This 170-nucleotide RNA was probed chemically with DMS and 2A3. The data come from the RNA Mapping Database (RMDB), library 15KLIB. For 2A3 the reverse transcriptase was SuperScript II with manganese. For DMS the reverse transcriptase was MarathonRT. For DMS, 2,836 sequencing reads were counted.
[RMDB]
RNA sequence: GGGAACGACUCGAGUAGAGUCGAAAACAACUGUUAUCUUGCCACUGCAUUUUUAACACUCCAACAAAUAGAGUUGAAGUUUAAUCCACCUGCUCUACAAAGGGCUGGUGAAGCUGCUAACUUUUGUGAACUCCUGGCUUCGGCCAGGAGAAAAGAAACAACAACAACAAC
Reactivity to DMS in 0.01 (KOAc 150mM, MgCl2 10mM, bicine 150mM(pH8.5), 24C), signal-to-noise 2, nucleotides 027 to 129: c030a000a090c030u000g000u140u020a000u000c110u040u110g040c060c150a130c120u080g090c090a020u010u000u240u030u000a010a000c220a020c060u080c020c000a070a040c150a000a000a000u090a070g060a140g050u000u000g030a070a090g030u000u200u010a190a060u050c120c000a000c010c060u000g030c000u000c000u020a000c300a090a100a080g100g020g020c000u000g010g020u010g060a050a110g010c080u050g000c080u000a000a100c030u080u040u000u000g030u080g000a030a200
Reactivity to 2A3 in 0.01 (KOAc 150mM, MgCl2 10mM, bicine 150mM(pH8.5), 24C), signal-to-noise 3, nucleotides 027 to 129: c010a010a000c000u030g000u030u020a140u140c070u080u130g050c010c010a140c090u050g010c060a080u040u020u000u000u170a060a040c080a000c070u020c020c010a040a000c030a020a200a190u300a030g040a000g000u020u000g050a040a010g000u030u060u020a070a030u090c020c000a000c020c000u050g000c000u030c010u060a150c060a160a250a060g000g030g000c030u010g010g000u000g000a030a010g010c040u030g010c020u030a030a030c020u000u010u010u000g060u000g030a010a010